[RMDB]
RNA sequence: GGGAACGACUCGAGUAGAGUCGAAAAAGAGUGGCUGUCUCACUGUUGCCACUUGUUGGAUCAUCCUUCACCUCCUGCCCACCCUGGGGUCUUUCUCGUAAUAGAGGCAGUAAGCAUGGCCCUGAUGUCGUUAUGUUAGCUUCGGCUAACAUAACGAAAAAGAAACAACAACAACAAC
Reactivity to DMS in 0.01 (KOAc 150mM, MgCl2 10mM, bicine 150mM(pH8.5), 24C), signal-to-noise 3, nucleotides 027 to 126: a080g000a030g030u000g000g010c030u010g000u010c040u000c150a080c160u010g000u000u000g010c020c010a040c030u000u010g000u010u020g020g010a170u000c110a090u010c040c010u000u010c050a130c040c010u000c020c020u010g010c030c010c030a120c080c060c050u000g000g000g000g000u000c020u000u000u000c000u010c020g010u000a110a100u010a170g000a040g000g020c060a070g010u010a090a100g020c080a050u000g000g020c030c000c030u000g010a110u000g000
Reactivity to 2A3 in 0.01 (KOAc 150mM, MgCl2 10mM, bicine 150mM(pH8.5), 24C), signal-to-noise 1, nucleotides 027 to 126: a010g040a000g010u040g010g100c040u080g050u120c040u020c110a060c100u100g050u120u070g000c000c000a020c000u020u040g040u010u020g010g000a060u080c010a070u020c070c000u000u070c080a040c000c000u040c000c030u040g040c030c000c000a050c040c000c010u030g010g010g020g020u000c000u000u070u030c000u020c000g040u040a070a020u040a230g030a040g020g000c000a020g050u080a110a030g040c030a040u110g040g000c000c000c000u000g000a040u150g030